[RMDB]
RNA sequence: GGGAACGACUCGAGUAGAGUCGAAAAGAAGGAAGCCUGAGGCAAACCAUUGGUCCGACGGACAGAAAUCAUGUAUAAGGCUUACAGUUCGGAUAAGACUGCUGAACAAGUUGAAGUCCAAUAGCUAGAAGUCUUAUGCUUUCGAGCAUAAGACUUCAAAAGAAACAACAACAACAAC
Reactivity to DMS in 0.01 (KOAc 150mM, MgCl2 10mM, bicine 150mM(pH8.5), 24C), signal-to-noise 3, nucleotides 027 to 126: g000a160a070g000g000a060a060g000c010c010u010g030a220g000g010c010a040a130a180c160c110a160u010u000g010g020u000c010c020g000a120c160g000g000a040c030a060g000a120a110a150u050c080a090u010g000u020a060u010a150a070g020g010c000u000u000a060c050a070g020u020u020c180g000g000a060u000a030a250g010a080c060u030g020c010u020g010a060a020c140a110a050g000u000u020g000a050a140g000u010c010c040a050a020u030a030g000c060u010a140
Reactivity to 2A3 in 0.01 (KOAc 150mM, MgCl2 10mM, bicine 150mM(pH8.5), 24C), signal-to-noise 3, nucleotides 027 to 126: g170a070a000g090g080a020a000g020c000c020u040g000a080g070g050c070a100a050a040c010c050a100u050u170g060g000u050c000c010g020a070c170g020g000a010c010a020g060a000a080a020u170c090a080u070g020u010a100u050a200a020g000g000c000u000u030a020c020a030g020u070u090c090g030g000a010u000a070a020g050a010c020u050g030c080u110g020a050a000c020a060a030g000u000u040g060a070a000g020u020c000c000a030a080u060a030g010c030u090a080
Source: RMDB libraries RFM100 and RFMREP, as collected in RNAgym. Structure probing data (DMS and 2A3) for a 177-nucleotide construct. For 2A3 the reverse transcriptase was SuperScript II with manganese. The RNA was probed in 150 mM KOAc, 10 mM MgCl2 and 150 mM bicine (pH 8.5) at 24 C.